An RNA of 207 nucleotides, treated with 2A3 and read out base by base. It was measured as part of the RMDB library RNAMAK. Conditions: 150 mM KOAc, 10 mM MgCl2 and 150 mM bicine (pH 8.5), 24 C.

RNA sequence: GGGAACGACUCGAGUAGAGUCGAAAAGGGGUCGGUCUGUAGGCUAACCAGAGCUUGGAUUUAUACAGCUGAAGCCUCCACGGCUGUAUUGUCAGCUCUGAUGAAAGCCUAUGGACCGACGGAGGCACCCAAACCAACGAGGUUCGCCUCGUUGGAACACCCCUGAGAUGUUCGCAUCUCAGGGGUGAAAAGAAACAACAACAACAAC
Reactivity to 2A3 in 0.01 (KOAc 150mM, MgCl2 10mM, bicine 150mM(pH8.5), 24C), signal-to-noise 1, nucleotides 027 to 156: g100g030g020g000u010c000g020g000u000c000u000g040u000a000g030g000c030u070a070a090c040c010a030g000a000g010c070u280u300g150g000a030u050u300u050a050u050a000c000a000g000c000u000g030a190a000g000c000c000u000c000c000a010c000g000g000c000u060g000u000a000u000u050g020u020c080a010g000c000u030c000u000g000a000u120g100a140a200a000g000c000c000u000a000u000g010g000a000c000c000g000a000c000g000g000a000g000g000c000a050c010c000c030a010a040a110c000c000a000a000c000g000a000g000g000u110u110c160g130c030c000u000c000g000u010u010g000g000a000a000